The record gives the reactivity of an RNA of 177 nucleotides to DMS and 2A3.

RNA sequence: GGGAACGACUCGAGUAGAGUCGAAAAGACAAAUGCAGCAUAUUAGGCUAUGCAGGAAAGGGACGGUAGCUCCUGGUGUCAGUUCAUACGGUGUGAUGCAUCUGCGUCGUGCACACAUGCACCCAAAGAACUAAGAACCGUUCGCGGUUCUUAGUUCAAAAGAAACAACAACAACAAC
Reactivity to DMS in 0.01 (KOAc 150mM, MgCl2 10mM, bicine 150mM(pH8.5), 24C), signal-to-noise 2, nucleotides 027 to 126: g000a060c100a070a100a110u000g000c030a080g000c020a040u000a110u010u010a130g020g010c090u000a010u000g000c010a070g010g000a080a080a080g020g000g020a050c080g010g000u020a060g010c060u000c010c010u000g010g010u000g000u000c040a090g010u000u000c090a050u010a080c120g000g000u010g010u000g000a110u000g000c010a020u000c040u000g020c090g010u000c120g000u000g030c000a010c060a050c030a040u000g020c070a120c010c020c040a040a080a190
Reactivity to 2A3 in 0.01 (KOAc 150mM, MgCl2 10mM, bicine 150mM(pH8.5), 24C), signal-to-noise 2, nucleotides 027 to 126: g050a010c030a000a100a000u130g010c030a030g000c000a020u010a140u270u130a150g100g000c020u060a030u100g000c000a010g080g010a110a010a050g060g020g060a000c060g050g050u070a010g010c020u030c000c020u020g020g000u050g030u040c050a030g020u080u100c030a040u070a170c100g080g010u000g010u030g030a210u050g010c010a030u000c050u080g070c060g050u150c030g000u050g010c010a020c010a000c010a030u100g020c020a070c010c010c000a040a100a060
Conditions: 150 mM KOAc, 10 mM MgCl2 and 150 mM bicine (pH 8.5), 24 C.